[RMDB]
RNA sequence: GGGAACGACUCGAGUAGAGUCGAAAAUCUUUCCAGCGGGUGGUGUACACAGGGGAGAGCAUGUCGCGUUUCAUUUGCCAUGAUGGCGCUAUCCCUCGUCCGGCAAACCAGACCUGUCCCAGCCCGGCAGCGGACCUAGGUUCGCCUAGGUCCGCUGAAAAGAAACAACAACAACAAC
Reactivity to 2A3 in 0.01 (KOAc 150mM, MgCl2 10mM, bicine 150mM(pH8.5), 24C), signal-to-noise 1, nucleotides 027 to 126: u000c000u010u020u000c020c020a000g000c000g020g000g000u110g010g000u000g020u070a020c070a000c020a030g020g000g000g000a130g000a010g070c050a020u200g060u170c060g000c030g070u140u260u150c070a130u030u000u190g070c010c010a090u150g040a160u190g090g050c000g000c080u140a100u080c000c000c020u000c000g050u000c000c000g020g120c040a020a020a020c010c020a000g010a080c000c000u000g000u000c000c000c000a090g080c090c000c000g000g080